[RMDB]
RNA sequence: GGGAACGACUCGAGUAGAGUCGAAAAUAAGCAAAAGACAACCACCUUUCCCGCUGACAAUAGCGUUAUCCCUCUGCACUUCGGUAAUAUGAGGGCACAGUAAAUCCCGCAAGGACGAGAAUGUGAUUAAACAGUUACAGCUUCGGCUGUAACUGAAGAGACAUAGUGUGUUCGCACACUAUGUCUCAAAAGAAACAACAACAACAAC
Reactivity to DMS in 0.01 (KOAc 150mM, MgCl2 10mM, bicine 150mM(pH8.5), 24C), signal-to-noise 1, nucleotides 027 to 156: u010a090a150g040c050a040a030a060a200g000a090c070a150a170c000c000a190c030c000u000u000u000c010c070c000g100c100u000g000a170c100a030a250u000a050g040c040g000u000u000a080u000c000c030c000u050c030u000g030c050a050c000u000u000c200g050g040u030a070a160u020a080u000g010a030g000g030g000c010a040c070a130g050u000a050a090a120u000c010c010c000g040c130a130a200g060g040a060c030g000a080g040a040a130u000g040u000g030a060u000u000a070a050a160c000a010g020u010u000a000c000a000g000c000u010u000c300g080g000c000u000g000u000a000a000c010u000g000a030a030
Reactivity to 2A3 in 0.01 (KOAc 150mM, MgCl2 10mM, bicine 150mM(pH8.5), 24C), signal-to-noise 2, nucleotides 027 to 156: u070a010a000g070c030a020a110a100a070g120a070c030a060a040c090c000a030c010c060u000u040u000c000c020c000g000c010u030g040a080c110a100a100u060a110g020c040g020u050u070a090u080c020c030c000u020c010u010g010c000a000c030u050u050c180g120g010u050a050a040u150a100u300g010a020g000g000g000c010a000c000a010g030u050a030a090a010u020c000c000c000g100c060a050a040g030g010a010c010g020a030g030a100a010u060g010u010g040a020u080u210a100a160a030c010a000g010u020u000a000c000a000g000c000u050u060c190g100g000c000u000g000u010a000a000c000u000g000a000a010